[RMDB]
RNA sequence: GGGAACGACUCGAGUAGAGUCGAAAAUCUUGGAAACAUCCUUUCAGUAUUUCUUUGGUAAUGGUCUCUUCUCUGCCAGGCUCAGAAAAGAUUGGGCUCAAGUAUUCUAGAAGACAGAGGUGAGACAAGAAAGGACAUUGUUAGAAAUACCCAAAUAACCUACUAGGGCAUUCGUGCCCUAGUAGGUAAAAGAAACAACAACAACAAC
Reactivity to 2A3 in 0.01 (KOAc 150mM, MgCl2 10mM, bicine 150mM(pH8.5), 24C), signal-to-noise 1, nucleotides 027 to 156: u010c000u030u100g190g060a000a030a000c000a010u000c000c000u000u000u000c070a100g050u040a140u040u140u090c120u090u230u280g050g090u180a000a090u130g040g000u000c000u020c000u250u130c000u000c000u000g000c020c060a010g040g000c010u000c030a070g090a080a140a030a020g100a080u090u250g000g000g000c000u000c040a030a070g060u010a090u300u000c000u070a040g040a180a040g000a090c000a000g000a000g000g040u060g000a000g000a000c000a000a000g000a000a000a000g000g070a000c000a100u110u110g030u000u000a000g080a010a080a000u230a110c000c000c000a080a040a000u030a060